[RMDB]
RNA sequence: GGGAACGACUCGAGUAGAGUCGAAAAGUGGCAUACUUCGGUAUGCCACAAACCAGACCCUAUCAGGAACACGCUCUACUGCGUGAUCCCAAGUAGAUCCCAAAAGUCGUGGGUUCGCCCACGACAAGAUUUUUAGUCUCUUCGGAGACUAAAAAUCAAAAGAAACAACAACAACAAC
Reactivity to 2A3 in 0.01 (KOAc 150mM, MgCl2 10mM, bicine 150mM(pH8.5), 24C), signal-to-noise 2, nucleotides 027 to 126: g000u000g010g020c020a000u020a010c020u030u070c240g060g010u000a000u000g010c000c010a000c000a010a000a000c020c010a030g090a020c030c000c000u020a030u110c050a030g000g020a000a020c000a000c010g030c010u110c090u270a230c220u150g010c000g000u000g010a030u000c000c000c000a140a050g030u030a030g010a120u030c020c010c010a050a120a010a040g010u010c010g000u000g000g020g020u010u030c200g040c000c000c000a000c000g000a000c000a000a000
Reactivity to DMS in 0.01 (KOAc 150mM, MgCl2 10mM, bicine 150mM(pH8.5), 24C), signal-to-noise 2, nucleotides 027 to 126: g010u010g000g000c000a000u000a010c000u000u000c120g070g000u000a000u000g000c010c010a000c000a000a050a100c160c110a160g000a060c040c030c000u000a010u000c100a200g010g000a020a020c000a000c000g000c000u000c300u040a140c170u020g000c010g000u000g000a010u000c020c000c080a110a040g000u000a130g010a100u000c020c000c010a090a140a070a140g020u000c000g030u000g000g000g020u000u000c210g010c000c000c000a050c010g020a000c000a000a040